[RMDB]
RNA sequence: GGGAACGACUCGAGUAGAGUCGAAAAAAUAUUCCUGUGCCAUCAUGCAGUGAAAGUUGACGCCCUGGGGUCGAUCACGCCGGGCAUUCGCCCGGUCGAACCGUCCAACUCCGUGGAAGCCGUAAUGGCAGGAAGCGGACGAACGGCGGCAUAGGGACUAUUAAUCUAUGUUCGCAUAGAUUAAUAGAAAAGAAACAACAACAACAAC
Reactivity to DMS in 0.01 (KOAc 150mM, MgCl2 10mM, bicine 150mM(pH8.5), 24C), signal-to-noise 2, nucleotides 027 to 156: a040a030u000a050u010u000c000c000u000g040u000g030c020c030a100u010c070a140u010g000c000a110g030u020g000a100a050a140g060u000u000g000a100c040g000c000c010c040u000g020g020g030g010u010c000g010a150u000c030a050c070g000c000c000g010g030g060c010a260u000u000c120g040c000c010c000g010g040u000c020g000a030a040c000c010g050u000c020c000a070a120c030u000c000c000g020u020g030g000a300a170g020c000c000g000u010a090a070u010g010g020c010a050g020g000a300a300g000c020g000g000a030c080g000a060a030c040g030g010c020g020g030c010a050u000a010g000g020g030a220
Reactivity to 2A3 in 0.01 (KOAc 150mM, MgCl2 10mM, bicine 150mM(pH8.5), 24C), signal-to-noise 2, nucleotides 027 to 156: a000a000u200a050u020u050c000c010u020g020u030g020c050c020a170u120c030a080u170g100c050a070g070u030g160a100a060a070g060u070u070g030a030c000g060c000c000c080u080g030g000g000g060u010c030g010a050u050c020a000c060g000c020c000g000g000g020c000a030u140u230c110g040c000c000c000g020g010u000c000g000a010a010c000c000g030u030c010c000a020a040c030u000c000c010g010u020g050g100a090a040g000c000c000g060u250a290a090u200g000g000c000a000g020g030a000a000g020c000g000g000a000c000g010a050a000c010g010g010c040g000g000c000a010u040a020g000g000g010a010